RNA sequence: GGGAACGACUCGAGUAGAGUCGAAAAGCGUACUACCUUUUGACGGCUUACCAAGAAAUCGAUAAGGCUUCCCAAAUAGGAAGCCUUUUGACGAUUUCUAGUAAGCCGAUAAGGUAUCGCAAACACCGUAAUGUGUGUUCGCACACAUUACGGUGAACGAUUCAACAAUCUUCGGAUUGUUGAAUCGAAAAGAAACAACAACAACAAC
Reactivity to DMS in 0.01 (KOAc 150mM, MgCl2 10mM, bicine 150mM(pH8.5), 24C), signal-to-noise 1, nucleotides 027 to 156: g010c010g000u010a000c080u000a020c000c000u010u020u000u000g000a170c050g020g000c000u000u010a020c000c000a060a120g020a010a020a000u000c000g040a090u000a020a020g020g010c000u000u000c010c010c030a050a150a210u020a040g000g010a020a010g020c010c000u000u010u000u010g020a300c040g000a030u000u020u010c000u000a060g000u010a000a010g010c000c000g000a000u000a000a010g000g010u010a050u000c020g030c000a110a060a250c010a010c000c000g000u010a010a000u000g020u010g020u010g070u000u000c300g030c030a010c010a000c000a000u000u000a020c010g010g020u010g000a000a070
Reactivity to 2A3 in 0.01 (KOAc 150mM, MgCl2 10mM, bicine 150mM(pH8.5), 24C), signal-to-noise 3, nucleotides 027 to 156: g000c000g040u060a120c040u010a010c030c020u060u050u090u210g300a170c010g000g000c000u000u000a000c000c020a070a010g010a010a010a000u020c020g000a020u010a040a010g000g000c060u000u010c080c030c030a130a270a110u270a050g000g000a000a000g000c000c120u010u010u020u060g010a000c010g000a000u000u000u000c000u000a000g000u000a000a000g020c000c000g000a000u000a010a000g000g010u020a030u300c000g000c020a000a050a000c010a000c010c000g000u000a000a000u000g000u010g020u000g010u030u060c260g040c130a000c010a000c000a000u000u000a000c000g000g010u000g000a000a000